An RNA of 177 nucleotides, treated with DMS and 2A3 and read out base by base. For 2A3 the reverse transcriptase was SuperScript II with manganese. Values are in units of 0.01, from 0 to 300, in steps of 10.
RNA sequence: GGGAACGACUCGAGUAGAGUCGAAAAAACACCUGGACCAUCACUGAGUUCGAGACCACACCUGUAAUGUCCACCUACCUGCUGGCGUACAUCGUCAGUGAGUUCACCCAUGUGGAGACAACAGCACCCGUCAUCACUAAUUCGUUAGUGAUGACGGAAAAGAAACAACAACAACAAC
Reactivity to DMS in 0.01 (KOAc 150mM, MgCl2 10mM, bicine 150mM(pH8.5), 24C), signal-to-noise 3, nucleotides 027 to 126: a050a040c140a080c040c040u000g010g000a100c080c030a050u000c050a070c040u010g000a110g020u000u000c020g010a120g010a100c030c010a080c120a060c090c020u000g000u010a040a090u000g000u000c030c010a030c040c140u000a070c070c040u000g020c010u000g030g000c010g010u000a120c250a100u010c000g000u000c010a000g000u000g000a030g020u000u020c150a150c090c020c040a140u030g020u010g000g000a070g010a070c110a030a030c030a070g000c180a090c140
Reactivity to 2A3 in 0.01 (KOAc 150mM, MgCl2 10mM, bicine 150mM(pH8.5), 24C), signal-to-noise 3, nucleotides 027 to 126: a000a010c090a010c000c000u010g030g010a030c020c020a020u080c030a020c090u050g030a020g110u070u060c030g030a030g060a050c030c000a020c020a020c030c010u040g050u100a090a080u070g040u050c000c000a040c010c050u030a020c010c010u020g000c000u020g000g000c000g020u070a080c090a220u170c050g010u020c000a000g010u000g030a020g000u060u080c100a110c040c040c010a060u150g040u060g040g040a020g010a020c030a040a010c000a060g050c040a060c000